Structure probing data (2A3) for a 177-nucleotide construct. For 2A3, 464 sequencing reads were counted. The RNA was probed in 150 mM KOAc, 10 mM MgCl2 and 150 mM bicine (pH 8.5) at 24 C.

RNA sequence: GGGAACGACUCGAGUAGAGUCGAAAAGAGGGUCUAGAGCGCGGCAGUCAGAACAUGUGGGCUAAGCUGUGUGUUCGAGAGGGAAACAGCCCAGACCGCCCGCUAAGGUCCCAAAUUCAGAGCCGAGCUCGAACAGGGCAUUCGUGCCCUGUUCGAGAAAAGAAACAACAACAACAAC
Reactivity to 2A3 in 0.01 (KOAc 150mM, MgCl2 10mM, bicine 150mM(pH8.5), 24C), signal-to-noise 1, nucleotides 027 to 126: g010a030g000g020g040u050c000u040a070g020a000g100c160g020c220g000g000c010a000g010u000c000a000g000a040a000c000a000u010g020u100g000g120g000c050u050a110a170g120c030u050g070u000g020u000g030u020u000c080g030a080g090a230g070g000g000a000a220a140c060a060g220c000c000c000a000g000a040c000c000g000c000c010c000g000c000u020a010a000g000g000u000c000c000c000a030a140a000u070u000c000a030g010a010g110c000c000g000a090g020

It was measured as part of the RMDB library RFM100.